[RMDB]
RNA sequence: GGGAACGACUCGAGUAGAGUCGAAAAUGCCACCUGAUUUUAGUGAGCGCAGUGGUGUCUGCGAUGUGACCCAAGAUUCCAGUCUCCGACCACAAGACUUACGUUACCUAAUGUCCAGUGUGAAACCACAACCUUCUGCAUUCGUGCAGAAGGUUGUAAAAGAAACAACAACAACAAC
Reactivity to 2A3 in 0.01 (KOAc 150mM, MgCl2 10mM, bicine 150mM(pH8.5), 24C), signal-to-noise 1, nucleotides 027 to 126: u060g050c000c000a010c000c020u050g100a180u000u030u060u150a020g000u040g100a040g030c050g000c070a010g020u020g010g120u050g030u020c030u030g000c020g100a080u050g050u060g090a050c020c000c010a040a050g090a080u100u030c030c000a000g050u010c060u000c000c030g030a070c000c000a020c020a050a030g070a090c060u110u100a030c050g060u010u040a090c020c000u080a140a060u100g020u020c000c000a040g010u000g040u050g130a070a020a000c030c000
Reactivity to DMS in 0.01 (KOAc 150mM, MgCl2 10mM, bicine 150mM(pH8.5), 24C), signal-to-noise 2, nucleotides 027 to 126: u010g010c030c030a130c030c050u010g010a100u000u000u000u000a030g000u000g010a090g050c040g000c080a050g010u020g000g010u000g010u020c010u000g000c050g030a100u010g010u010g010a140c020c030c020a050a110g010a170u000u000c050c040a100g000u000c040u000c060c060g030a080c100c050a060c030a070a110g000a090c030u000u010a110c100g010u000u000a080c060c030u000a040a060u000g000u000c020c020a060g010u000g040u000g010a040a190a080c070c060